An RNA of 207 nucleotides, treated with 2A3 and DMS and read out base by base.
Source: RMDB library OK3TST, as collected in RNAgym.
The reactions ran in a buffer of 150 mM KOAc, 10 mM MgCl2 and 150 mM bicine (pH 8.5), at 24 C.
2A3 adducts were read by reverse transcription with SuperScript II with manganese.
The DMS profile rests on 2,823 reads.
The 2A3 profile rests on 1,855 reads.
RNA sequence: GGGAACGACUCGAGUAGAGUCGAAAAGGAGGUCAUGGCUGGGACACUCAGGAAGGUCAAGUGUGGGGUGCUGCCCCAGGGCCCCUCUCCUCGGCCUGUAUGUUCAAUAGGUGCACUGGCCUCCCUGUCUUGGCCAGACAGCUCUGAGAGCCAGGGCGUUGAGUUACUCUUUCGAGAGUAACUCAACAAAAGAAACAACAACAACAAC
Reactivity to 2A3 in 0.01 (KOAc 150mM, MgCl2 10mM, bicine 150mM(pH8.5), 24C), signal-to-noise 3, nucleotides 027 to 156: g070g030a040g000g020u100c110a220u070g000g010c000u000g010g010g020a020c040a010c090u210c080a030g010g030a040a020g030g000u030c100a150a090g010u010g010u060g030g010g010g020u080g120c120u150g020c020c040c010c030a010g000g000g010c000c000c040c000u070c020u030c020c010u070c070g010g000c020c000u020g040u040a090u050g150u080u180c100a170a090u130a210g110g000u090g020c000a000c010u010g000g000c000c000u000c000c000c000u010g000u000c010u020u020g000g020c010c010a000g000a040c000a000g000c000u010c020u020g130a210g010a020g070c000c010a000g000g010g000c010
Reactivity to DMS in 0.01 (KOAc 150mM, MgCl2 10mM, bicine 150mM(pH8.5), 24C), signal-to-noise 1, nucleotides 027 to 156: g000g020a080g010g000u000c090a090u000g000g000c000u000g000g010g020a040c040a150c160u030c170a060g010g000a070a040g010g020u000c010a060a080g000u010g010u000g010g010g000g010u000g020c210u000g030c010c010c040c040a270g000g010g000c000c010c000c000u000c060u000c010c040u000c020g040g020c000c010u000g010u000a030u000g020u000u000c130a110a190u000a090g010g010u000g040c010a070c040u010g020g010c000c000u010c000c020c010u000g020u000c000u000u010g010g050c040c020a160g000a070c040a120g010c040u000c050u000g000a130g020a180g010c020c000a040g000g040g050c060